This 177-nucleotide RNA was probed chemically with 2A3. Values cover nucleotides 27 to 126.
RNA sequence: GGGAACGACUCGAGUAGAGUCGAAAAUCUAGGCCCACCUCAGACUACAUGGUAACCCUUUACAAACAAAUCAUCGAGAACUUCAUGGGUAUUUCUGUAGAGUCGUUGCUGAAUAGUAGUAACCAAGGCAUAUCAGCUCCUUCGGGAGCUGAUAUGCAAAAGAAACAACAACAACAAC
Reactivity to 2A3 in 0.01 (KOAc 150mM, MgCl2 10mM, bicine 150mM(pH8.5), 24C), signal-to-noise 1, nucleotides 027 to 126: u070c040u000a110g000g040c020c000c000a030c000c000u120c040a030g020a220c050u000a000c000a070u110g060g000u060a020a040c000c000c050u010u030u010a020c070a030a200a000c000a000a180a080u000c000a100u110c180g070a050g070a260a040c000u110u000c010a020u000g130g020g000u150a170u060u050u040c010u000g070u040a000g000a000g050u050c070g020u000u000g040c000u000g030a060a020u010a130g040u000a040g000u040a080a040c000c010a090a040g040